[RMDB]
The record gives the reactivity of an RNA of 177 nucleotides to 2A3 and DMS. DMS adducts were read by reverse transcription with MarathonRT. The 2A3 profile rests on 1,725 reads. The RNA was probed in 150 mM KOAc, 10 mM MgCl2 and 150 mM bicine (pH 8.5) at 24 C.

RNA sequence: GGGAACGACUCGAGUAGAGUCGAAAAAGGUAUACGUUGCCGCUAGCCGCCCUCCACGGCGCCAUAAUAAUGUCCGCAGCCAGCACCCUCAGCAAGGUGAUCGUGCCGGGGGCCGUACUGCCAAUAGAAGUUUAUAUUGCUUCGGCAAUAUAAACUUAAAAGAAACAACAACAACAAC
Reactivity to 2A3 in 0.01 (KOAc 150mM, MgCl2 10mM, bicine 150mM(pH8.5), 24C), signal-to-noise 1, nucleotides 027 to 126: a000g060g000u100a070u000a100c160g040u080u090g070c050c020g000c090u050a010g050c000c030g000c040c000c000u050c040c010a040c040g030g000c020g000c060c000a070u110a270a050u120a110a040u200g060u050c010c020g060c100a000g000c000c000a000g000c000a050c000c010c000u060c030a050g040c040a080a000g070g000u060g050a130u140c010g020u020g100c040c020g020g000g000g000g000c000c000g000u010a050c060u050g020c000c010a000a030u100a110g200
Reactivity to DMS in 0.01 (KOAc 150mM, MgCl2 10mM, bicine 150mM(pH8.5), 24C), signal-to-noise 4, nucleotides 027 to 126: a070g010g010u010a070u000a050c090g010u000u010g000c040c030g000c070u010a090g020c070c070g000c050c020c030u000c060c050a110c060g010g010c050g020c050c030a030u000a100a080u010a080a090u010g000u010c050c040g010c050a080g000c060c030a060g000c050a080c020c010c000u000c040a080g000c100a060a090g000g010u000g010a070u000c070g010u010g010c020c040g000g010g020g000g030c060c030g000u000a040c100u010g010c020c040a050a110u010a100g010